[RMDB]
Structure probing data (DMS and 2A3) for a 177-nucleotide construct.
2A3 adducts were read by reverse transcription with SuperScript II with manganese.
Source: RMDB library OK2TRN, as collected in RNAgym.
The DMS profile rests on 910 reads.
For 2A3, 779 sequencing reads were counted.
Reactivities are given for positions 27 through 126.
RNA sequence: GGGAACGACUCGAGUAGAGUCGAAAAUCUGUUUACAAGUUAUCGUUAAGUCCGUGUCUGACUACGAUUCCGUAAACAGAAGCCAGUUUGCGUCAAGUCCGACAUGGACUCUUGGCAGAACUGAUCAUGACGCUAGUCACUUCGGUGACUAGCGUCAAAAAGAAACAACAACAACAAC
Reactivity to DMS in 0.01 (KOAc 150mM, MgCl2 10mM, bicine 150mM(pH8.5), 24C), signal-to-noise 1, nucleotides 027 to 126: u000c000u000g010u000u000u010a020c040a060a080g010u000u000a000u020c090g010u000u030a040a030g010u000c010c100g000u010g010u010c090u010g010a020c000u000a130c050g000a080u000u000c140c080g000u000a000a030a000c000a040g000a070a130g010c110c030a050g010u000u000u000g000c140g000u010c070a120a000g000u000c000c040g000a170c160a070u010g010g000a020c020u000c000u000u000g020g010c000a290g030a040a010c020u000g000a150u000c180a080
Reactivity to 2A3 in 0.01 (KOAc 150mM, MgCl2 10mM, bicine 150mM(pH8.5), 24C), signal-to-noise 1, nucleotides 027 to 126: u000c000u000g010u000u030u030a040c050a150a240g030u090u020a100u100c030g030u000u180a150a020g000u060c040c090g120u080g080u120c130u080g000a000c000u010a090c030g030a040u110u000c080c010g070u020a000a000a000c000a010g060a010a000g030c010c020a030g010u020u020u020g050c050g000u010c000a000a010g000u000c000c010g100a290c270a150u150g000g010a000c000u000c030u070u030g020g000c020a020g020a050a000c020u030g020a070u080c040a090